RNA sequence: GGGAACGACUCGAGUAGAGUCGAAAAUCUGUUUACAAGUUAUCGUUAAGUCCAUGUCUGACUACGAUUCCGUAAACAGAAGCUAGUUUGCGUCAAGUCCGACAUGGACUCUUGGCAGAACUAAUCACGUACUCCCCGUAUUCGUACGGGGAGUACGAAAAGAAACAACAACAACAAC
Reactivity to 2A3 in 0.01 (KOAc 150mM, MgCl2 10mM, bicine 150mM(pH8.5), 24C), signal-to-noise 1, nucleotides 027 to 126: u040c000u000g020u050u130u090a050c000a000a070g020u010u120a240u230c080g050u090u250a010a000g020u000c000c000a060u050g020u000c040u080g020a010c000u080a020c120g080a000u100u050c090c030g000u030a010a000a000c000a010g060a050a010g070c020u040a040g020u000u000u000g020c020g000u010c070a090a000g000u000c020c020g050a040c080a070u060g010g030a010c030u020c000u000u000g010g000c010a020g030a060a010c040u090a150a020u080c050a010
Reactivity to DMS in 0.01 (KOAc 150mM, MgCl2 10mM, bicine 150mM(pH8.5), 24C), signal-to-noise 1, nucleotides 027 to 126: u010c010u000g020u000u000u010a100c010a100a020g010u000u020a030u040c140g050u040u020a140a060g020u000c000c140a060u000g010u000c040u000g000a010c000u000a100c110g010a060u000u030c250c020g000u000a010a000a020c030a090g000a080a110g000c170u000a050g010u000u000u020g000c070g010u000c010a090a010g000u000c010c110g020a020c110a030u000g030g000a000c050u000c020u000u000g000g010c000a130g010a020a050c020u010a120a060u040c140a190

Background
Conditions: 150 mM KOAc, 10 mM MgCl2 and 150 mM bicine (pH 8.5), 24 C. The record gives the reactivity of an RNA of 177 nucleotides to 2A3 and DMS. High 2A3 reactivity points to a flexible backbone, as in loops and unpaired stretches. For 2A3 the reverse transcriptase was SuperScript II with manganese. The data come from the RNA Mapping Database (RMDB), library OK2TRN. For DMS, 813 sequencing reads were counted.